[RMDB]
An RNA of 177 nucleotides, treated with DMS and 2A3 and read out base by base. The 2A3 profile rests on 6,191 reads. For 2A3 the reverse transcriptase was SuperScript II with manganese. Reactivities are given for positions 27 through 126. The RNA was probed in 150 mM KOAc, 10 mM MgCl2 and 150 mM bicine (pH 8.5) at 24 C.
RNA sequence: GGGAACGACUCGAGUAGAGUCGAAAACUCAUUAGUCAUUGCUUUCUGUUUGUCCUCUAAUACAGAAAACACUGAAGAGGUGCUUUACCCAAACUUCUCUUGACCGAAUUGUGAUAAGAUCAAUGAGACAUGAUACCUCAUUCGUGAGGUAUCAUGUAAAAGAAACAACAACAACAAC
Reactivity to DMS in 0.01 (KOAc 150mM, MgCl2 10mM, bicine 150mM(pH8.5), 24C), signal-to-noise 5, nucleotides 027 to 126: c020u000c020a110u010u000a090g010u000c020a050u000u000g010c030u000u000u000c000u000g010u000u000u000g010u000c090c110u010c100u000a090a080u010a050c020a010g000a020a020a010a020c020a010c070u000g020a040a080g010a070g000g010u000g010c110u000u000u000a160c010c000c010a070a090a120c160u010u010c010u000c000u000u000g000a050c040c010g000a100a130u000u000g020u000g010a160u000a060a120g010a080u000c040a010a020u000g010a060g020
Reactivity to 2A3 in 0.01 (KOAc 150mM, MgCl2 10mM, bicine 150mM(pH8.5), 24C), signal-to-noise 6, nucleotides 027 to 126: c010u010c010a050u060u140a040g060u020c010a030u010u080g020c010u030u050u040c020u020g070u060u100u070g140u140c050c030u080c100u140a090a110u100a090c020a010g020a020a050a020a010c030a010c010u030g020a060a020g040a060g050g000u020g030c040u080u100u210a200c000c000c000a030a050a050c050u100u030c000u000c000u020u050g030a030c000c030g100a210a190u180u140g080u070g090a100u090a110a060g010a060u040c020a020a030u150g010a020g010